[RMDB]
RNA sequence: GGGAACGACUCGAGUAGAGUCGAAAAAGUAAAGGAACAAGUCUCAGACUUGCUUGUUAAAUUACUGCGUGGAAUGCCGAUUCCAGAUUUUGAUUUAGACGAUUUUAUUGACGCACCAUGCUAUUGCUACCCACCUUCUUCGGAAGGUGGAAAAGAAACAACAACAACAAC
Reactivity to 2A3 in 0.01 (KOAc 150mM, MgCl2 10mM, bicine 150mM(pH8.5), 24C), signal-to-noise 8, nucleotides 027 to 129: a000g070u080a010a010a020g170g050a030a010c010a000a000g040u000c050u090c210a090g060a190c040u030u050g000c000u020u010g030u040u070a030a100a040u050u020a040c030u040g010c000g030u020g010g040a150a160u060g040c020c020g030a030u040u010c020c020a050g020a090u050u070u050u090g110a130u050u060u130a090g020a110c090g000a060u030u030u040u080a130u050u150g010a020c020g010c010a020c010c010a020u020g020c020u050a050u120u100g020c030u020a050c010
Reactivity to DMS in 0.01 (KOAc 150mM, MgCl2 10mM, bicine 150mM(pH8.5), 24C), signal-to-noise 7, nucleotides 027 to 129: a020g010u030a000a050a050g080g060a050a100c010a000a000g040u020c110u080c190a160g010a110c110u040u010g030c040u070u050g040u010u000a050a060a070u000u000a000c030u000g030c070g000u050g000g000a050a100u000g030c030c070g040a180u040u020c060c100a110g000a070u000u030u030u000g020a110u020u030u020a010g030a130c020g020a020u020u000u040u030a100u010u130g010a210c300g010c050a080c050c030a040u050g000c050u060a050u000u000g010c080u040a080c150